Structure probing data (2A3 and DMS) for a 177-nucleotide construct. Reactivities are given for positions 27 through 126. For 2A3 the reverse transcriptase was SuperScript II with manganese.
[RMDB]
RNA sequence: GGGAACGACUCGAGUAGAGUCGAAAACGCCGCGACAAGCGGUCCGGGCGCCCUAGGGGCCCGGCGGAGACGGGCGCCGGAGGUGUCCGACGCCUGCUCGUACCCAUCUUGCUCCUUGGAGGAUUUGUGCUGAACUUAAUUUCGAUUAAGUUCAGCAAAAAGAAACAACAACAACAAC
Reactivity to 2A3 in 0.01 (KOAc 150mM, MgCl2 10mM, bicine 150mM(pH8.5), 24C), signal-to-noise 4, nucleotides 027 to 126: c020g010c000c000g010c000g050a220c140a160a050g020c000g000g000u010c000c010g000g000g000c040g080c000c000c010u070a110g000g000g050g000c000c010c010g000g000c000g040g040a050g010a070c000g000g010g010c020g010c020c040g010g030a070g070g180u240g160u050c000c000g000a010c000g000c000c000u010g010c010u010c010g020u080a100c000c000c000a040u050c070u080u150g070c010u040c020c010u040u110g090g030a040g060g020a110u070u050u110g090
Reactivity to DMS in 0.01 (KOAc 150mM, MgCl2 10mM, bicine 150mM(pH8.5), 24C), signal-to-noise 4, nucleotides 027 to 126: c110g010c020c000g010c000g010a150c190a100a140g010c000g000g010u000c010c010g010g000g020c020g020c000c000c090u030a210g030g030g000g020c010c010c000g000g000c300g000g000a040g000a100c020g010g000g000c010g000c010c000g020g010a040g020g020u030g010u010c010c000g020a000c010g000c010c000u000g020c010u010c010g020u020a120c010c000c020a070u030c080u020u020g000c050u000c040c030u020u040g040g010a080g010g010a170u020u000u020g020